Description
Chemical mapping of a 177-nucleotide RNA with 2A3 and DMS. DMS adducts were read by reverse transcription with MarathonRT. Values are in units of 0.01, from 0 to 300, in steps of 10. Reactivities are given for positions 27 through 126. 2A3 adducts were read by reverse transcription with SuperScript II with manganese. It was measured as part of the RMDB library TTRDES.

RNA sequence: GGGAACGACUCGAGUAGAGUCGAAAAGAUAUGGAGCUGCACCCAGGGAGUUCCAUUUCGGAAACGAAAUGAGAACAUCGAUCUGGUUGCAGCUCCUAAGUCAAAAUCCAUAGGUUCGCCUAUGGAAGUCUGAUCAGUAGUUCGCUACUGAUCAGACAAAAGAAACAACAACAACAAC
Reactivity to 2A3 in 0.01 (KOAc 150mM, MgCl2 10mM, bicine 150mM(pH8.5), 24C), signal-to-noise 1, nucleotides 027 to 126: g020a010u060a020u080g000g000a000g010c020u010g000c000a020c010c010c000a020g150g110g070a130g000u030u000c000c010a010u000u000u010c020g010g050a060a020a040c040g060a020a000a000u300g030a300g000a200a030c070a080u300c070g070a160u140c000u000g000g020u040u020g010c000a000g000c000u010c000c000u000a000a010g000u010c010a000a000a000a130u000c010c010a000u010a000g000g040u070u020c300g080c100c000u000a000u000g010g000a000a020
Reactivity to DMS in 0.01 (KOAc 150mM, MgCl2 10mM, bicine 150mM(pH8.5), 24C), signal-to-noise 2, nucleotides 027 to 126: g000a040u000a300u000g000g030a030g040c000u000g000c010a020c070c010c000a010g010g020g040a060g000u000u010c010c000a000u000u000u000c000g000g000a150a080a250c000g010a010a010a010u000g000a170g010a000a000c000a220u000c150g020a060u020c000u000g010g000u000u000g000c010a000g000c020u000c000c010u000a010a080g000u010c050a080a090a120a170u000c000c000a020u000a010g010g000u000u000c300g000c000c000u000a000u010g000g000a020a020